[RMDB]
RNA sequence: GGGAACGACUCGAGUAGAGUCGAAAAAGUGACUCCACACCGCUUCUGGGCUGAAAGAUAUACUCAGUAGCCUGGCUUUUAAGGGAGGGCCUCUGUGCUGUGAGUCCAGCCUCUUUUCAGGCUCUCUCCCUAAGGCAGCUCCAUGUGGCUACAUUGACAUUUAUAUACUGUUCGCAGUAUAUAAAUGAAAAGAAACAACAACAACAAC
Reactivity to 2A3 in 0.01 (KOAc 150mM, MgCl2 10mM, bicine 150mM(pH8.5), 24C), signal-to-noise 6, nucleotides 027 to 156: a010g080u050g030a030c020u000c020c000a020c010a010c020c030g020c040u080u020c040u090g040g020g000c040u070g070a110a120a040g080a050u120a010u060a210c050u060c060a040g010u020a000g020c000c020u030g040g020c000u100u090u050u110a040a010g000g000g000a000g010g000g000c020c010u100c070u110g120u160g030c010u020g050u070g140a050g060u040c040c000a010g000c020c010u100c070u170u170u080u150c080a010g000g000c000u000c000u000c020u040c020c000c000u010a010a010g030g000c010a040g030c030u060c070c030a080u140g030u070g080g000c010u040a030c020a070u030u120g010a020
Reactivity to DMS in 0.01 (KOAc 150mM, MgCl2 10mM, bicine 150mM(pH8.5), 24C), signal-to-noise 2, nucleotides 027 to 156: a030g010u000g020a070c010u000c000c020a060c060a060c050c040g010c020u000u010c020u000g030g020g010c000u010g010a110a120a130g010a180u000a090u010a060c040u000c030a100g020u010a040g010c010c010u020g010g010c030u000u000u000u010a050a050g000g020g020a060g020g010g010c000c010u000c030u000g020u000g030c020u000g000u000g030a190g030u010c200c040a040g000c030c020u000c040u000u000u000u010c120a040g020g010c000u000c020u000c010u000c000c010c040u010a050a090g020g020c010a080g020c060u000c050c060a120u000g020u000g000g020c010u000a080c060a150u000u000g010a260